Chemical mapping of a 177-nucleotide RNA with 2A3 and DMS. The data come from the RNA Mapping Database (RMDB), library OK1LIB. The reactions ran in a buffer of 150 mM KOAc, 10 mM MgCl2 and 150 mM bicine (pH 8.5), at 24 C.
RNA sequence: GGGAACGACUCGAGUAGAGUCGAAAAAUGAAGAUGAAGCGAUGUUAGCUGCAUUUUACGAUGACAGUAAAACAAUCGACGCUAAACAUAAACCAGCCGUUGUGUAUUAAGGAAAGGGGGAGAUACGCCCAUACAAUAACUUCGGUUAUUGUAUGGGAAAAGAAACAACAACAACAAC
Reactivity to 2A3 in 0.01 (KOAc 150mM, MgCl2 10mM, bicine 150mM(pH8.5), 24C), signal-to-noise 9, nucleotides 027 to 126: a000u160g060a040a060g120a100u110g030a090a010g030c030g010a000u030g020u020u040a030g000c010u010g000c020a010u010u030u090u180a100c170g020a000u030g110a100c010a000g020u050a000a090a040a000c070a050a100u050c050g050a070c030g030c050u070a090a090a000c030a040u110a060a070a030c040c010a030g070c050c040g010u050u050g030u030g020u050a120u130u140a150a080g100g020a060a040a030g040g010g000g010g000a060g010a030u120a050c060g030
Reactivity to DMS in 0.01 (KOAc 150mM, MgCl2 10mM, bicine 150mM(pH8.5), 24C), signal-to-noise 9, nucleotides 027 to 126: a050u020g010a090a070g010a090u010g010a110a070g010c020g010a060u010g000u000u010a300g010c000u000g000c020a020u000u000u020u050a100c280g000a030u000g000a120c020a010g000u000a020a060a060a010c030a030a050u010c040g010a140c080g000c040u010a040a110a070c090a040u020a030a090a130c050c020a080g000c120c080g010u000u000g000u010g010u000a060u020u030a080a080g000g010a020a030a030g000g000g000g010g000a070g010a090u030a050c180g010